[RMDB]
RNA sequence: GGGAACGACUCGAGUAGAGUCGAAAACUUAGGAAGCGUUUCUUGAGCUUCCCUGGGAUGAGCGUUUGGGAGAGCUGAUUCUGCAGCCCAGAGAGUAGUCUCAGGGCAUCCUCUGGAGCCUGACCUGAUAGGUUGUAUGGUUCGCCAUACAACCUAUAAAAGAAACAACAACAACAAC
Reactivity to DMS in 0.01 (KOAc 150mM, MgCl2 10mM, bicine 150mM(pH8.5), 24C), signal-to-noise 5, nucleotides 027 to 126: c050u000u000a060g000g000a240a050g000c100g030u010u010u000c020u010u030g000a080g000c150u010u000c010c020c000u030g010g000g010a050u000g000a060g010c290g010u000u010u020g000g010g000a100g020a120g010c030u010g000a110u040u020c110u010g000c050a130g020c000c010c000a040g000a020g000a090g000u020a260g020u000c010u000c020a030g010g000g010c080a010u010c140c010u000c020u000g010g000a060g000c030c010u000g000a120c040c010u010g010
Reactivity to 2A3 in 0.01 (KOAc 150mM, MgCl2 10mM, bicine 150mM(pH8.5), 24C), signal-to-noise 8, nucleotides 027 to 126: c040u050u050a020g010g030a020a020g030c040g080u110u210u030c040u030u050g010a010g010c010u030u000c010c000c000u020g000g010g010a030u040g020a050g100c060g040u040u080u060g040g010g000a210g030a060g090c020u030g040a270u220u100c070u180g020c010a030g050c000c010c010a010g010a000g000a010g020u080a020g020u010c010u000c020a010g010g010g000c020a040u030c010c010u000c020u020g010g000a010g000c000c010u070g040a190c000c000u010g010